[RMDB]
RNA sequence: GGGAACGACUCGAGUAGAGUCGAAAAAGCAUGUAGUGCGUGGGUGGCUUGCACUAUAAUCUCAGACAUCAAAAGUUUAAUUGGCGAAAAUAACUACGCUCUCGCUGCGUAAUCGAAGAAUAGUAGAUUAGACGCUUCAUCGCCGCCAAAGUGGCAGCCACCACAUAUCCUUCGGGAUAUGUGGUGGAAAAGAAACAACAACAACAAC
Reactivity to 2A3 in 0.01 (KOAc 150mM, MgCl2 10mM, bicine 150mM(pH8.5), 24C), signal-to-noise 1, nucleotides 027 to 156: a000g040c060a090u150g010u150a050g000u050g000c000g010u000g000g020g010u000g020g020c050u010u060g000c000a000c010u080a040u020a200a070u000c020u000c020a030g010a020c020a000u070c010a060a030a010a090g000u020u110u170a180a170u040u080g020g000c010g080a000a010a030a060u100a170a100c030u010a010c030g000c050u020c000u010c070g070c180u130g000c000g010u050a080a000u010c020g010a040a000g020a000a110u100a060g010u000a000g000a050u000u090a250g000a050c030g000c000u120u020c050a030u050c030g010c050c000g000c040c020a180a070a030g100u070g020g000c010a000g000

The record gives the reactivity of an RNA of 207 nucleotides to 2A3.
For 2A3, 558 sequencing reads were counted.
Reactivities are given for positions 27 through 156.